RNA sequence: GGGAACGACUCGAGUAGAGUCGAAAAAUCGCCGCAGAUGACGUCGUAGCGUGCCUCAGUUGGCAUUUCCUUCGAGCUGGAAAUGACGCUCGUUGUCGCAUCAACCACGCUGCGCUUCAGAUCGAUGGGUCCACCUAUGGUUCGCCAUAGGUGGACCAAAAGAAACAACAACAACAAC
Reactivity to 2A3 in 0.01 (KOAc 150mM, MgCl2 10mM, bicine 150mM(pH8.5), 24C), signal-to-noise 2, nucleotides 027 to 126: a000u130c130g050c050c020g000c030a010g030a100u040g010a010c000g010u300c000g000u090a000g010c000g020u030g030c030c000u220c090a080g000u090u070g010g020c020a110u040u120u080c000c000u000u080c040g070a010g130c030u120g070g020a070a180a110u210g080a100c080g000c000u010c020g000u000u010g110u030c120g000c120a230u200c000a080a010c010c000a000c000g000c000u000g010c000g000c000u000u010c000a000g000a080u050c100g050a060u130g020